[RMDB]
RNA sequence: GGGAACGACUCGAGUAGAGUCGAAAAUCUGUCGUGACAUUAACAAAAGCAGACGAGAUGCUUAUUGUAGCAACGCAUAAGUUAUGGGAAUACAUGGACGUGGAUACAGUUUGUGAUAUCGCGCGUGAUAGAUAAACAAUUUCGAUUGUUUAUCUAUAAAAGAAACAACAACAACAAC
Reactivity to DMS in 0.01 (KOAc 150mM, MgCl2 10mM, bicine 150mM(pH8.5), 24C), signal-to-noise 9, nucleotides 027 to 126: u000c040u000g010u010c040g030u000g010a090c070a070u000u000a090a080c070a040a060a090a070g010c020a040g010a210c130g010a120g010a110u000g010c020u000u000a070u000u000g010u000a050g010c080a070a050c070g010c050a060u010a060a100g010u000u000a050u000g010g010g010a110a060u010a060c070a050u010g010g010a070c050g020u000g000g010a120u000a020c040a060g010u000u000u010g010u000g010a070u000a040u000c020g020c040g010c110g010u010g000
Reactivity to 2A3 in 0.01 (KOAc 150mM, MgCl2 10mM, bicine 150mM(pH8.5), 24C), signal-to-noise 9, nucleotides 027 to 126: u020c020u040g100u080c030g060u040g040a040c030a110u100u130a180a020c030a050a090a020a010g010c020a020g040a120c060g090a070g020a130u050g010c010u070u070a090u140u200g040u050a030g050c040a030a040c050g010c040a030u030a140a040g020u080u120a060u140g050g020g070a080a060u090a100c030a040u070g080g030a020c020g020u030g020g010a010u030a040c020a050g070u100u200u150g120u080g050a080u030a010u060c070g000c000g000c010g100u010g030
Overview
Structure probing data (DMS and 2A3) for a 177-nucleotide construct. Values cover nucleotides 27 to 126. Source: RMDB library OK2TST, as collected in RNAgym. The reactions ran in a buffer of 150 mM KOAc, 10 mM MgCl2 and 150 mM bicine (pH 8.5), at 24 C.